[RMDB]
RNA sequence: GGGAACGACUCGAGUAGAGUCGAAAAUCACAAGGGAACCUAAUAGCCAAUUGUGCAUCAAUCCUCUGCAAGUGUUACACAACAGGAACGAUCAUUAAUCAAGACCCUGACAAGAUCCUAACAUACAGACAACCCUUACGUUCGCGUAAGGGUUGUCAAAAGAAACAACAACAACAAC
Reactivity to 2A3 in 0.01 (KOAc 150mM, MgCl2 10mM, bicine 150mM(pH8.5), 24C), signal-to-noise 2, nucleotides 027 to 126: u050c020a030c000a040a050g000g000g000a060a070c110c050u110a200a000u100a200g030c020c040a040a120u000u090g080u060g000c030a000u050c030a000a090u020c000c010u000c000u080g050c090a120a140g000u000g030u170u130a120c120a050c070a140a120c060a070g000g090a030a050c000g000a050u080c080a140u090u160a090a080u080c050a070a000g070a210c000c000c000u000g020a010c050a020a060g010a000u050c050c000u070a170a000c000a120u300a020c060a020
Reactivity to DMS in 0.01 (KOAc 150mM, MgCl2 10mM, bicine 150mM(pH8.5), 24C), signal-to-noise 1, nucleotides 027 to 126: u130c220a080c040a000a000g000g000g000a070a040c150c160u060a120a020u080a160g000c000c090a130a120u020u020g000u000g000c130a030u000c000a050a100u000c050c060u000c030u010g040c080a050a000g020u000g030u000u020a060c000a000c270a220a020c030a000g000g000a130a090c080g040a000u060c260a050u000u000a060a020u030c030a100a010g000a130c010c010c000u000g060a120c000a070a110g000a050u000c020c000u000a170a020c230a210u000a090c050a100
The data come from the RNA Mapping Database (RMDB), library OK1LIB. Structure probing data (2A3 and DMS) for a 177-nucleotide construct. Values are in units of 0.01, from 0 to 300, in steps of 10. For DMS, 937 sequencing reads were counted. The 2A3 profile rests on 870 reads. For DMS the reverse transcriptase was MarathonRT.